[RMDB]
RNA sequence: GGGAACGACUCGAGUAGAGUCGAAAACGAAUGGAGUUCGCUCCAUUCGAAAUCCGAGGGAACGACUCGAGUAGAGUCGAAAAUCCCACUCAACUCAACUCAAAAGCGAAUGCUUCGGCAUUCGCAAUCCUAUUAUUCUGUUCGCAGAAUAAUAGGAAAAAGAAACAACAACAACAAC
Reactivity to 2A3 in 0.01 (KOAc 150mM, MgCl2 10mM, bicine 150mM(pH8.5), 24C), signal-to-noise 3, nucleotides 027 to 126: c000g000a000a000u010g000g010a010g020u050u030c120g160c060u030c000c000a010u010u010c000g020a010a030a000u000c020c030g050a180g000g010g000a010a010c000g000a000c000u000c000g000a010g020u040a010g010a000g000u000c000g000a000a000a000a010u000c000c010c010a020c020u110c010a020a130c020u040c090a030a040c010u050c130a060a070a050a030g000c000g000a000a000u010g000c010u050u080c230g070g000c000a000u020u000c000g010c000a000a000
Reactivity to DMS in 0.01 (KOAc 150mM, MgCl2 10mM, bicine 150mM(pH8.5), 24C), signal-to-noise 4, nucleotides 027 to 126: c000g010a010a000u000g000g000a040g010u000u030c240g050c000u020c000c000a000u000u010c000g000a010a100a120u000c010c060g000a170g000g000g000a010a050c000g000a010c000u000c000g000a040g000u000a030g000a010g000u000c000g000a010a010a100a140u000c000c010c000a220c120u010c100a070a110c100u010c110a090a110c150u000c140a080a070a140a110g000c000g000a010a000u000g000c000u000u010c220g020g000c000a010u000u000c000g010c010a010a020